RNA sequence: GGGAACGACUCGAGUAGAGUCGAAAAUGGCGCUCGAUGGCAACGAGGGCAGCACCGUAAGCGCCCAUCAAUUCGCAAAUAUCGGGGCGCACUACUUUUUUGUUGAUAACUUUUUCAAGGGCGCGUAGGUGCAGUCUUAAUUCGUUAAGACUGCACCAAAAGAAACAACAACAACAAC
Reactivity to 2A3 in 0.01 (KOAc 150mM, MgCl2 10mM, bicine 150mM(pH8.5), 24C), signal-to-noise 2, nucleotides 027 to 126: u060g050g000c000g030c000u020c030g110a150u090g120g040c030a030a000c050g000a010g000g050g000c030a030g040c030a040c040c000g030u000a090a090g000c010g010c040c000c000a110u120c030a020a180u190u150c090g040c140a090a030a070u180a100u100c090g030g060g020g020c000g010c060a020c040u090a070c020u120u100u090u010u150u100g060u080u060g030a130u070a230a210c000u140u100u000u140u110c060a050a030g020g000g010c050g020c060g070u060a050
Reactivity to DMS in 0.01 (KOAc 150mM, MgCl2 10mM, bicine 150mM(pH8.5), 24C), signal-to-noise 2, nucleotides 027 to 126: u000g000g050c000g000c000u000c010g020a110u020g010g010c130a100a080c050g000a030g010g020g040c060a060g070c050a080c110c160g000u020a080a100g020c020g020c030c010c010a100u000c120a070a130u010u010c140g000c120a100a080a120u020a060u000c100g010g000g020g000c010g020c020a020c050u000a050c040u000u010u020u000u000u020g020u000u000g010a070u010a080a100c050u000u000u000u010u000c070a100a130g000g000g010c010g000c050g010u010a070
This 177-nucleotide RNA was probed chemically with 2A3 and DMS.
2A3 adducts were read by reverse transcription with SuperScript II with manganese.
It was measured as part of the RMDB library OK2TRN.
For 2A3, 956 sequencing reads were counted.